[RMDB]
RNA sequence: GGGAACGACUCGAGUAGAGUCGAAAAGAUAUGGAUCCUCGUUGAUGGGAUGAUGACCUCGGAAACGAGCAAGUCCUAAGACGAGGGAUCCUAAGUCAAAAGACCUAAACGUUCGCGUUUAGGUCAAGAACUAGGUAAUCUUCGGAUUACCUAGUUCAAAAGAAACAACAACAACAAC
Reactivity to DMS in 0.01 (KOAc 150mM, MgCl2 10mM, bicine 150mM(pH8.5), 24C), signal-to-noise 7, nucleotides 027 to 126: g010a070u010a300u010g010g000a010u000c000c000u000c010g010u000u000g000a260u010g000g000g010a010u000g010a090u010g010a100c300c010u000c010g000g000a100a100a150c000g000a010g000c040a060a170g010u010c000c000u010a110a300g000a000c000g000a020g010g020g010a010u000c000c000u010a030a080g000u010c040a070a110a100a100g000a000c000c000u000a000a010a000c000g000u000u010c220g020c010g020u000u000u000a000g000g010u000c000a010a040
Reactivity to 2A3 in 0.01 (KOAc 150mM, MgCl2 10mM, bicine 150mM(pH8.5), 24C), signal-to-noise 6, nucleotides 027 to 126: g020a020u060a040u120g000g000a000u000c010c000u000c010g010u000u060g190a300u300g060g010g000a000u050g050a100u170g090a100c000c020u000c010g010g030a070a040a040c010g010a010g000c030a060a080g000u000c000c000u070a270a100g000a000c020g010a080g050g020g000a000u000c000c000u000a080a020g040u030c030a010a020a060a210g000a000c000c000u000a000a000a020c020g010u070u090c300g010c000g150u000u030u000a010g000g000u000c000a010a000
The record gives the reactivity of an RNA of 177 nucleotides to DMS and 2A3. The data come from the RNA Mapping Database (RMDB), library TTRDEL. For DMS the reverse transcriptase was MarathonRT. Conditions: 150 mM KOAc, 10 mM MgCl2 and 150 mM bicine (pH 8.5), 24 C. Reactivities are given for positions 27 through 126. For 2A3 the reverse transcriptase was SuperScript II with manganese.